[RMDB]
RNA sequence: GGGAACGACUCGAGUAGAGUCGAAAAUACAAUGGUAUAUCAUUGUUAUCUGUUCAUAGCGUUGUUAUUAUUUACUGUGUAAUAAGUUUUAAAGCAACAUGAACCGUAGGGAUAUCCAACAAUGCUACCACGUAAAUGCAUUCGUGCAUUUACGUGGAAAAGAAACAACAACAACAAC
Reactivity to DMS in 0.01 (KOAc 150mM, MgCl2 10mM, bicine 150mM(pH8.5), 24C), signal-to-noise 1, nucleotides 027 to 126: u000a010c010a050a050u000g000g000u050a040u050a070u000c010a000u000u000g000u000u010a080u000c130u010g000u000u000c130a110u000a060g000c200g000u000u000g020u000u000a010u000u030a000u040u000u000a160c000u010g150u020g020u010a060a050u040a060a030g020u000u020u100u000a080a040a130g090c210a130a000c030a110u030g000a050a000c140c040g000u020a040g010g000g010a070u010a010u000c120c090a000a000c050a060a050u000g010c000u000a060
Reactivity to 2A3 in 0.01 (KOAc 150mM, MgCl2 10mM, bicine 150mM(pH8.5), 24C), signal-to-noise 4, nucleotides 027 to 126: u130a010c040a020a010u060g020g030u270a110u110a030u300c000a000u000u030g040u020u050a090u060c010u020g030u000u030c010a030u050a070g070c080g020u010u010g010u010u060a070u050u000a050u030u170u020a100c020u060g050u040g030u140a080a110u150a150a130g000u030u030u000u120a120a170a000g090c010a010a020c010a060u040g010a000a010c000c030g010u070a090g000g100g040a050u010a020u070c030c030a010a000c050a000a020u070g000c000u040a060
Chemical mapping of a 177-nucleotide RNA with DMS and 2A3. Conditions: 150 mM KOAc, 10 mM MgCl2 and 150 mM bicine (pH 8.5), 24 C. DMS (dimethyl sulfate) methylates the pairing face of unpaired adenines and cytosines. DMS adducts were read by reverse transcription with MarathonRT. Values cover nucleotides 27 to 126.